[RMDB]
RNA sequence: GGGAACGACUCGAGUAGAGUCGAAAAGAUAUGGAGUCCGAAGAACUACCUUACAUCGAUCUCGGAAACGAGGGAGUAGUGUAGGGAGGACUCCUAAGUCAAAUCAUUGAUGUUCGCAUCAAUGAAACCACAACAUCACGUUCGCGUGAUGUUGUGGAAAAGAAACAACAACAACAAC
Reactivity to DMS in 0.01 (KOAc 150mM, MgCl2 10mM, bicine 150mM(pH8.5), 24C), signal-to-noise 1, nucleotides 027 to 126: g000a030u000a300u000g000g000a020g030u000c000c070g010a140a150g000a180a160c030u000a050c000c010u000u000a010c050a130u000c080g010a150u000c000u010c010g010g000a110a070a030c000g010a050g020g000g030a300g010u000a060g060u010g000u000a000g020g000g050a110g020g000a010c000u030c000c000u000a000a030g000u000c030a050a090a180u000c020a040u000u000g000a020u000g020u000u000c180g010c000a000u000c010a010a000u000g000a000a090a160
Reactivity to 2A3 in 0.01 (KOAc 150mM, MgCl2 10mM, bicine 150mM(pH8.5), 24C), signal-to-noise 2, nucleotides 027 to 126: g030a000u080a090u100g000g000a000g010u010c040c000g100a250a120g030a060a050c020u020a020c000c030u050u060a000c020a190u240c090g100a110u020c020u000c000g000g040a170a060a050c030g000a030g020g020g000a020g010u070a000g020u000g000u050a020g020g010g010a030g010g000a000c010u000c000c000u020a060a000g010u030c030a010a030a180u040c000a010u020u030g010a000u000g070u100u090c300g020c140a000u000c000a000a000u010g050a070a020a020

Notes:
Structure probing data (DMS and 2A3) for a 177-nucleotide construct. Conditions: 150 mM KOAc, 10 mM MgCl2 and 150 mM bicine (pH 8.5), 24 C. Values cover nucleotides 27 to 126. The 2A3 profile rests on 2,265 reads.